The record gives the reactivity of an RNA of 177 nucleotides to DMS and 2A3. The 2A3 profile rests on 14,416 reads. For DMS the reverse transcriptase was MarathonRT. The reactions ran in a buffer of 150 mM KOAc, 10 mM MgCl2 and 150 mM bicine (pH 8.5), at 24 C. It was measured as part of the RMDB library OK2TST.
RNA sequence: GGGAACGACUCGAGUAGAGUCGAAAAUGUGAGUCUAGUGAAACCGCUGGACUACGAAAGUGUGCGUAGCUACAGGCUGGUUAUUCGUGCUCAAGAUGGAGGCAGUCCCUCCAGAAGUAACACCACCCACAUAAACUAGCUUCGGCUAGUUUAUGUGAAAAGAAACAACAACAACAAC
Reactivity to DMS in 0.01 (KOAc 150mM, MgCl2 10mM, bicine 150mM(pH8.5), 24C), signal-to-noise 9, nucleotides 027 to 126: u010g010u010g010a030g010u000c050u020a040g020u010g000a060a060a070c090c020g010c010u000g000g010a170c000u000a010c010g010a070a110a120g020u010g020u000g020c020g010u000a020g010c030u010a080c040a100g000g010c030u000g030g010u000u000a090u000u000c070g010u000g000c020u000c030a070a080g000a190u000g010g000a020g000g010c120a220g010u010c140c000c000u000c010c010a020g000a080a090g010u010a060a060c100a110c080c070a100c110c080
Reactivity to 2A3 in 0.01 (KOAc 150mM, MgCl2 10mM, bicine 150mM(pH8.5), 24C), signal-to-noise 7, nucleotides 027 to 126: u180g030u030g030a000g020u020c070u120a060g030u060g140a150a050a070c050c010g000c010u010g010g010a040c000u010a000c020g040a110a110a140g210u170g040u100g140c010g010u030a010g010c040u090a080c020a040g100g070c050u170g020g050u050u050a110u120u100c040g010u050g020c010u000c020a020a010g050a050u050g000g010a000g010g000c050a030g130u110c000c000c020u010c000c000a000g010a060a010g040u090a040a020c020a020c050c010a030c010c020